[RMDB]
RNA sequence: GGGAACGACUCGAGUAGAGUCGAAAAACAAAAUGGCUUAUUUACUGGGUUCGUCCAAAACGGAGUAACCCUUGAAGAAAGCAGGCAGGAUGAACCAAACAUCACUUCAAACUUAAACCAAGAAGUUUUCUUCCUGUUUAUUCGUAAACAGGAAGAAAAAAGAAACAACAACAACAAC
Reactivity to DMS in 0.01 (KOAc 150mM, MgCl2 10mM, bicine 150mM(pH8.5), 24C), signal-to-noise 1, nucleotides 027 to 126: a130c160a100a030a020a080u020g000g000c000u000u000a070u000u000u000a020c110u020g000g000g030u010u000c020g000u020c000c000a040a070a080a130c180g000g000a100g050u100a000a030c000c020c000u000u000g060a000a070g000a160a050a020g000c020a110g000g000c090a090g000g040a020u040g000a040a030c090c060a010a100a120c120a080u120c070a040c000u000u040c070a060a080a070c100u000u040a060a050a050c030c140a070a140g000a080a130g000u060u010
Reactivity to 2A3 in 0.01 (KOAc 150mM, MgCl2 10mM, bicine 150mM(pH8.5), 24C), signal-to-noise 2, nucleotides 027 to 126: a000c060a060a110a020a030u090g040g020c000u000u060a020u070u030u020a150c060u110g010g000g010u010u020c030g180u000c020c020a080a230a070a060c110g020g000a030g000u040a020a020c010c000c000u000u030g000a000a000g040a000a060a010g020c000a000g060g000c030a000g030g040a030u010g050a120a020c000c040a020a000a060c040a050u060c030a020c020u100u010c080a070a010a080c090u160u250a080a020a010c080c060a110a060g000a080a040g150u020u000

An RNA of 177 nucleotides, treated with DMS and 2A3 and read out base by base. Reactivities are given for positions 27 through 126. The RNA was probed in 150 mM KOAc, 10 mM MgCl2 and 150 mM bicine (pH 8.5) at 24 C. For 2A3, 849 sequencing reads were counted.